[RMDB]
RNA sequence: GGGAACGACUCGAGUAGAGUCGAAAAGAUAUGGACCGAUCCAGUCGACCGAAGAACUUAAUUCGGAAACGAAUUAAGGGAGGUCGCUGGAGUCGGUCCUAAGUCAAAACGGGCGUUCGCGCCCGAAGUAUUCUCUGUACUUCGGUACAGAGAAUACAAAAGAAACAACAACAACAAC
Reactivity to 2A3 in 0.01 (KOAc 150mM, MgCl2 10mM, bicine 150mM(pH8.5), 24C), signal-to-noise 2, nucleotides 027 to 126: g030a030u110a040u140g000g000a000c000c010g030a000u000c000c020a040g270u300c080g090a000c000c010g170a300a020g000a010a060c000u000u000a000a000u010u020c000g020g020a030a010a020c020g010a010a000u010u000a000a000g000g000g020a020g000g010u000c020g000c000u000g000g000a010g020u040c020g010g000u000c000c000u010a000a000g010u010c020a000a020a040a110c030g020g000g000c040g050u090u070c270g010c000g020c230c050c000g000a010a010
Reactivity to DMS in 0.01 (KOAc 150mM, MgCl2 10mM, bicine 150mM(pH8.5), 24C), signal-to-noise 2, nucleotides 027 to 126: g010a020u000a300u010g020g020a000c000c000g000a120u000c000c010a010g020u020c030g050a010c010c000g000a110a200g020a120a240c020u000u000a010a000u000u000c010g010g000a130a060a180c010g010a030a010u000u000a010a010g000g000g000a060g020g010u000c010g000c000u010g010g000a030g010u000c010g020g010u010c000c000u000a000a080g000u000c050a080a070a110a230c030g000g010g000c000g010u010u020c220g030c040g000c010c000c000g000a010a040
Structure probing data (2A3 and DMS) for a 177-nucleotide construct. The data come from the RNA Mapping Database (RMDB), library TTRDES. Conditions: 150 mM KOAc, 10 mM MgCl2 and 150 mM bicine (pH 8.5), 24 C. Reactivities are rounded to 0.1 and cut off at 0 and 3. Reactivities are given for positions 27 through 126. The DMS profile rests on 2,511 reads.